The record gives the reactivity of an RNA of 177 nucleotides to 2A3. Source: RMDB library OK1LIB, as collected in RNAgym. Values cover nucleotides 27 to 126. For 2A3, 650 sequencing reads were counted.
RNA sequence: GGGAACGACUCGAGUAGAGUCGAAAAGACGCCUGAUGGCGAACGUGCGCAAGAUAAGAAUGGUGGUAUAUACUGCCCAGAAUAACUAAUGGACGGCAGAGCGCACGUACCACCAAAGUCCACCAGACGACGCCUAGGUAUUCGUACCUAGGCGUCGAAAAGAAACAACAACAACAAC
Reactivity to 2A3 in 0.01 (KOAc 150mM, MgCl2 10mM, bicine 150mM(pH8.5), 24C), signal-to-noise 1, nucleotides 027 to 126: g010a010c000g020c000c000u130g300a120u300g010g000c010g000a020a000c000g000u000g000c020g000c040a040a000g010a300u290a110a000g020a170a080u030g000g000u000g000g000u000a000u000a000u040a090c000u000g000c000c000c000a000g000a060a070u030a060a130c050u100a140a020u150g100g080a030c000g020g000c080a090g000a000g080c000g000c000a000c000g000u000a000c000c090a150c000c000a000a010a000g060u000c000c000a000c000c000a010g000a010